[RMDB]
The record gives the reactivity of an RNA of 207 nucleotides to 2A3 and DMS. The RNA was probed in 150 mM KOAc, 10 mM MgCl2 and 150 mM bicine (pH 8.5) at 24 C.
RNA sequence: GGGAACGACUCGAGUAGAGUCGAAAAUCACUGAAUGCUCAUUAAUUCAAUGUAUGGCCAUAAUCAAGCUCUUCAUAGAAAAGUUCAGUUAUCCUUUUCAUUUUACAUUUUCAGAUGUUCUAUUGCAAUCAUUCAGUACACAAUCAUCUUCCUCCUGAAGUUGACGUAGAUUCGUCUACGUCAACUUAAAAGAAACAACAACAACAAC
Reactivity to 2A3 in 0.01 (KOAc 150mM, MgCl2 10mM, bicine 150mM(pH8.5), 24C), signal-to-noise 6, nucleotides 027 to 156: u070c010a000c020u020g030a030a020u050g020c040u020c150a100u100u190a160a080u170u070c080a040a050u080g050u060a060u070g050g000c030c020a070u100a160a060u190c070a060a040g020c010u010c010u080u040c040a080u060a100g060a020a060a010a010g000u070u080c040a020g010u050u100a100u140c010c000u010u030u040u080c020a040u030u090u060u100a080c040a060u050u030u050u140c050a030g020a110u030g040u030u030c030u130a100u090u140g030c030a030a040u020c010a050u050u050c000a010g020u050a030c050a000c010a050a140u110c030a020u010c040u050u000c000c000u020c000c020u030g030
Reactivity to DMS in 0.01 (KOAc 150mM, MgCl2 10mM, bicine 150mM(pH8.5), 24C), signal-to-noise 2, nucleotides 027 to 156: u010c040a090c000u010g020a050a020u010g010c170u000c090a180u000u000a100a080u010u000c030a040a030u010g030u000a040u000g040g000c050c000a060u000a050a170u000c040a100a140g010c000u000c020u000u000c050a160u000a110g000a020a050a030a030g020u000u010c070a090g000u000u010a050u010c040c010u000u010u000u010c020a110u010u010u010u000a120c040a070u000u010u010u010c070a100g010a120u000g030u000u010c050u000a100u020u000g020c030a080a080u010c050a040u010u010c040a050g020u000a080c090a050c100a080a090u000c050a070u000c070u000u000c020c000u010c030c030u000g010

Source: RMDB library OK3TST, as collected in RNAgym. DMS adducts were read by reverse transcription with MarathonRT.